[RMDB]
RNA sequence: GGGAACGACUCGAGUAGAGUCGAAAAUUGGAUCUGAAACCUGAGAAUAUCAUGUUCAUAACAAAGAAAAGUGACCAGUUAAAGUUGAUCGAUUUCGGUCUAGCAUCGAAACUAGAUCCUAAAGACACCUAUAGCAUACCUUCGGGUAUGCUAUAGGAAAAGAAACAACAACAACAAC
Reactivity to DMS in 0.01 (KOAc 150mM, MgCl2 10mM, bicine 150mM(pH8.5), 24C), signal-to-noise 5, nucleotides 027 to 126: u010u000g000g020a110u010c080u000g000a060a060a080c050c030u000g010a070g000a160a080u050a050u000c040a030u030g000u010u010c060a040u030a130a150c050a040a020a100g000a060a100a050a120g000u000g000a170c040c010a080g000u000u000a040a100a130g040u000u000g010a060u000c040g000a180u010u010u000c160g010g000u000c000u010a030g010c090a040u020c150g020a060a070a130c020u000a050g000a010u000c000c080u030a060a070a080g010a070c300a100
Reactivity to 2A3 in 0.01 (KOAc 150mM, MgCl2 10mM, bicine 150mM(pH8.5), 24C), signal-to-noise 5, nucleotides 027 to 126: u070u040g030g010a030u030c030u090g080a030a040a150c000c020u060g030a050g110a170a090u140a040u190c010a030u030g100u060u020c010a060u070a180a090c060a130a130a040g130a040a120a030a010g110u070g060a030c000c000a010g010u030u100a130a040a050g020u100u130g060a070u030c040g040a080u020u030u020c020g020g000u020c010u030a000g000c040a040u090c070g070a020a010a010c000u000a000g000a010u070c000c000u060a140a040a020g030a010c030a030
This 177-nucleotide RNA was probed chemically with DMS and 2A3. The reactions ran in a buffer of 150 mM KOAc, 10 mM MgCl2 and 150 mM bicine (pH 8.5), at 24 C. The data come from the RNA Mapping Database (RMDB), library OK1LIB. The 2A3 profile rests on 2,936 reads. Values are in units of 0.01, from 0 to 300, in steps of 10. 2A3 adducts were read by reverse transcription with SuperScript II with manganese. For DMS, 8,321 sequencing reads were counted. Values cover nucleotides 27 to 126.